Conditions: 150 mM KOAc, 10 mM MgCl2 and 150 mM bicine (pH 8.5), 24 C. Structure probing data (2A3) for a 207-nucleotide construct. For 2A3 the reverse transcriptase was SuperScript II with manganese. It was measured as part of the RMDB library OK3TST.
RNA sequence: GGGAACGACUCGAGUAGAGUCGAAAAUAUCUUGCUGGGCAUACUGAGCUCAUGAUUUUUGCUUUUCCAGGUCACUUUUGGCUGUAAGCUACUGUUCCUACUGAAUUAUUUCAUCUACAUAUCAUCUUGCUGUGGAUCAGCAUGCUGUCCCUGACCAUAUCGACCAGUGAUUCGUCACUGGUCGAUAAAAAGAAACAACAACAACAAC
Reactivity to 2A3 in 0.01 (KOAc 150mM, MgCl2 10mM, bicine 150mM(pH8.5), 24C), signal-to-noise 1, nucleotides 027 to 156: u120a010u030c050u020u100g030c060u050g070g000g000c070a030u060a120c080u170g040a010g060c000u000c060a060u050g040a040u030u060u030u110u030g000c040u020u040u090u000c000c010a030g050g060u060c050a110c140u170u100u050u120g070g000c010u000g070u110a080a010g060c030u040a040c080u040g080u070u000c020c010u030a030c050u050g080a020a010u110u050a080u060u140u050c040a090u040c010u090a090c050a140u090a080u070c050a000u000c030u020u070g000c030u000g090u090g060g000a040u060c020a000g000c020a000u050g070c000u030g010u020c010c030c000u060g090a060c090c080a050
For 2A3, 601 sequencing reads were counted.